The record gives the reactivity of an RNA of 207 nucleotides to 2A3 and DMS. For 2A3, 1,821 sequencing reads were counted. Reactivities are given for positions 27 through 156. 2A3 adducts were read by reverse transcription with SuperScript II with manganese.

RNA sequence: GGGAACGACUCGAGUAGAGUCGAAAACAUUCACAGUGUGUUCAUUUAUACUAUUUUUGCUCCCUUGGACUGGAUCAUAGGACUUCCAUUAUGAAUUUAGUUACCAGAUAGGAAACACCUCCAAACACACUUUGUACCAUGGGAGAGACACCCAGUACCAUAAUACCGCUUUCGAGCGGUAUUAUGGAAAAGAAACAACAACAACAAC
Reactivity to 2A3 in 0.01 (KOAc 150mM, MgCl2 10mM, bicine 150mM(pH8.5), 24C), signal-to-noise 4, nucleotides 027 to 156: c050a060u120u100c040a030c020a040g010u000g010u000g000u070u070c040a110u130u170u240a210u110a180c130u110a300u080u140u040u150u150g080c050u050c020c010c000u000u040g010g010a020c020u000g000g010a010u010c000a030u050a050g070g060a080c070u150u010c060c030a090u080u040a020u090g120a160a080u060u070u060a050g030u040u070a110c030c010a040g060a160u130a080g050g010a020a110a040c080a120c020c080u020c030c010a060a060a000c020a010c010a010c000u000u040u070g060u040a100c050c050a070u030g000g000g000a060g020a020g010a020c020a020c060c010c010a010g040u060a070
Reactivity to DMS in 0.01 (KOAc 150mM, MgCl2 10mM, bicine 150mM(pH8.5), 24C), signal-to-noise 2, nucleotides 027 to 156: c060a160u000u000c080a050c050a120g000u000g060u010g020u030u000c050a110u020u000u000a100u020a190c080u020a070u010u010u000u000u000g030c040u010c010c000c010u040u000g000g030a100c030u000g060g010a120u010c020a040u030a070g010g000a200c110u000u000c050c040a120u000u020a060u000g000a110a040u010u000u000a050g020u000u020a140c070c070a140g030a130u000a040g000g020a070a080a140c050a040c110c040u020c010c010a090a020a070c010a040c010a040c010u000u000u010g010u000a080c110c040a080u000g000g010g000a070g000a190g010a100c070a110c020c010c000a110g020u020a150